Overview: This 207-nucleotide RNA was probed chemically with 2A3 and DMS. The data come from the RNA Mapping Database (RMDB), library M2RFPK. For DMS the reverse transcriptase was MarathonRT. Reactivities are given for positions 27 through 156. For 2A3 the reverse transcriptase was SuperScript II with manganese.
[RMDB]
RNA sequence: GGGAACGACUCGAGUAGAGUCGAAAAACAGUCAGUACGCUGACUGAGGGAAACGGGAGCCGGGCUUGGGACAAGAGCCAUCGCAAGUCCAAGGCCAAGUAGGCUCUAGUGAUGGUACGCCAUCACAAAAACUGGUCUACCUUCGGGUAGACCAGAACUAAAUAGGAGUCUUCGGACUCCUAUUUAGAAAAGAAACAACAACAACAAC
Reactivity to 2A3 in 0.01 (KOAc 150mM, MgCl2 10mM, bicine 150mM(pH8.5), 24C), signal-to-noise 3, nucleotides 027 to 156: a000c000a000g010u000c000a010g010u080a070c250g050c120u020g000a000c000u010g010a090g040g070g030a090a210a140c140g080g020g010a020g010c010c030g010g020g010c000u030u020g070g030g010a020c010a050a040g020a030g100c040c050a050u090c090g010c110a050a010g000u000c010c020a070a080g040g000c020c010a060a020g050u090a080g070g000c000u000c000u010a020g000u000g000a000u000g010g010u020a010c260g040c030c000a000u020c000a010c000a000a080a000a020a010c010u000g000g000u000c000u000a010c010c000u030u030c270g060g000g000u000a000g000a000c000c000a000g000a000a010
Reactivity to DMS in 0.01 (KOAc 150mM, MgCl2 10mM, bicine 150mM(pH8.5), 24C), signal-to-noise 1, nucleotides 027 to 156: a090c000a000g030u010c000a000g030u000a120c300g100c010u000g050a000c010u020g000a050g000g000g010a070a120a110c080g010g010g000a090g010c000c010g040g020g010c010u010u000g000g030g000a050c010a060a160g010a140g030c040c160a280u000c030g030c030a030a240g000u000c000c010a040a030g030g010c030c040a040a150g030u010a140g000g060c030u010c010u000a040g000u000g010a000u000g010g030u010a150c210g060c000c000a030u000c010a020c010a060a020a070a070a100c000u000g010g010u000c000u000a010c000c010u010u000c300g030g040g010u000a000g010a000c010c000a000g000a020a080